RNA sequence: GGGAACGACUCGAGUAGAGUCGAAAAGGGGUCAUGAUAAGACAGGGAUUCUUGGUCAGGACAUGCGAUACUGAAGCCUCCACGGUAUCGCAACAGCCUGACGAUCCCAAUGACGUCAUGACGGAGGCACCCAAAGUGACUGAUUCGUCAGUCACAACAUAACGAUAUCCUUCGGGAUAUCGUUAUGAAAAGAAACAACAACAACAAC
Reactivity to DMS in 0.01 (KOAc 150mM, MgCl2 10mM, bicine 150mM(pH8.5), 24C), signal-to-noise 2, nucleotides 027 to 156: g000g030g040g000u000c000a030u010g000a020u000a050a160g000a210c030a010g030g050g020a050u000u000c060u010u010g070g040u030c020a040g010g010a090c050a270u000g000c010g010a010u000a010c020u010g000a040a070g000c020c000u010c020c030a300c030g020g010u020a000u000c000g000c000a040a040c120a120g000c020c000u000g010a000c000g000a010u000c020c000c030a190a090u000g000a030c030g010u000c020a030u010g000a030c010g010g000a030g100g050c010a140c030c000c020a070a060a140g020u000g010a030c010u010g020a050u000u000c300g000u000c000a000g000u000c000a010c020a080a240
Reactivity to 2A3 in 0.01 (KOAc 150mM, MgCl2 10mM, bicine 150mM(pH8.5), 24C), signal-to-noise 7, nucleotides 027 to 156: g070g010g030g000u000c000a010u010g030a020u050a140a110g120a150c120a140g010g000g010a030u130u140c110u300u300g150g010u000c010a010g000g040a150c030a200u050g020c000g000a000u000a000c010u010g050a100a030g010c000c010u010c000c000a010c000g000g000u000a000u000c000g000c000a010a020c040a010g050c000c000u000g000a000c000g000a010u010c020c000c010a030a190u060g000a020c020g010u000c000a010u000g000a000c010g000g000a000g000g000c000a050c020c000c000a080a130a000g010u010g000a000c000u000g010a020u050u130c220g060u030c100a000g000u000c000a000c000a000a000